Chemical mapping of a 177-nucleotide RNA with 2A3 and DMS.
RNA sequence: GGGAACGACUCGAGUAGAGUCGAAAAGUAUUGGCGAGCAGUUUAAACUGCAUUCUGCUAGCGACGGCACGCCAGUUCAGUGGCUCCUUUUCUUCGGAUCAAGAGCUGCUGAUUUUUAUGUCGAGCAUAAUUAUAAAUCAUUCGUGAUUUAUAAUUAAAAAGAAACAACAACAACAAC
Reactivity to 2A3 in 0.01 (KOAc 150mM, MgCl2 10mM, bicine 150mM(pH8.5), 24C), signal-to-noise 4, nucleotides 027 to 126: g070u060a090u200u060g000g010c020g030a040g000c020a000g010u080u160u300a210a270a060c010u010g000c010a020u140u020c050u060g000c010u030a080g050c000g030a030c000g010g000c030a000c010g000c000c000a010g010u020u000c010a010g000u010g010g010c000u010c000c000u020u020u020u050c010u050u070c180g120g000a010u030c020a020a010g000a000g000c000u010g010c000u010g000a000u040u000u010u010u090a120u100g010u010c010g000a020g030c000a050
Reactivity to DMS in 0.01 (KOAc 150mM, MgCl2 10mM, bicine 150mM(pH8.5), 24C), signal-to-noise 7, nucleotides 027 to 126: g010u010a060u000u000g000g000c000g000a190g020c000a010g000u000u010u010a080a100a170c010u000g000c010a130u010u010c220u000g000c010u010a110g020c010g000a050c020g000g000c010a150c010g000c000c010a040g000u000u000c000a010g020u000g000g010c000u000c000c030u000u000u000u000c010u000u020c190g020g000a010u000c040a010a030g000a020g010c000u000g010c000u000g000a000u000u010u010u010u020a050u010g000u000c010g010a160g030c150a160
The 2A3 profile rests on 6,537 reads. Reactivities are given for positions 27 through 126. The reactions ran in a buffer of 150 mM KOAc, 10 mM MgCl2 and 150 mM bicine (pH 8.5), at 24 C. Reactivities are rounded to 0.1 and cut off at 0 and 3.